Source: RMDB library OK1LIB, as collected in RNAgym. Chemical mapping of a 177-nucleotide RNA with 2A3 and DMS. Reactivities are given for positions 27 through 126. The 2A3 profile rests on 1,606 reads. For 2A3 the reverse transcriptase was SuperScript II with manganese. For DMS, 2,179 sequencing reads were counted.
RNA sequence: GGGAACGACUCGAGUAGAGUCGAAAAGGGAUACCAGUCACAAGCCGGAGUUAUUGGUGGCGCUGCAGUCAUUCGAGGCGUUGGCUGGAUUUCGUCAGUCGUCACGCACUGCUGAGCUACUGACGGCAUCACCCCAGCAUUUCGAUGCUGGGGUGAUAAAAGAAACAACAACAACAAC
Reactivity to 2A3 in 0.01 (KOAc 150mM, MgCl2 10mM, bicine 150mM(pH8.5), 24C), signal-to-noise 3, nucleotides 027 to 126: g120g010g040a080u120a150c000c030a000g060u080c020a020c020a110a000g020c000c020g080g020a080g120u160u100a090u180u280g080g010u030g020g010c070g000c080u200g000c010a020g010u050c000a120u110u160c050g070a100g040g040c070g000u030u120g020g000c000u060g090g000a040u010u090u060c030g000u000c030a040g000u060c010g050u090c030a000c050g050c030a120c140u140g000c040u040g020a040g020c000u010a000c020u040g010a010c010g010g020c020
Reactivity to DMS in 0.01 (KOAc 150mM, MgCl2 10mM, bicine 150mM(pH8.5), 24C), signal-to-noise 2, nucleotides 027 to 126: g000g000g010a050u030a090c010c010a070g010u000c050a140c300a080a250g000c030c000g000g010a090g000u080u030a100u030u000g020g000u000g030g000c000g000c050u000g030c070a010g010u000c170a080u000u030c040g020a180g000g000c010g010u000u040g000g000c010u060g000g000a150u020u050u030c030g000u020c040a080g000u020c010g010u000c080a060c150g000c300a070c110u010g040c130u000g000a120g000c000u020a000c060u000g000a000c020g000g020c090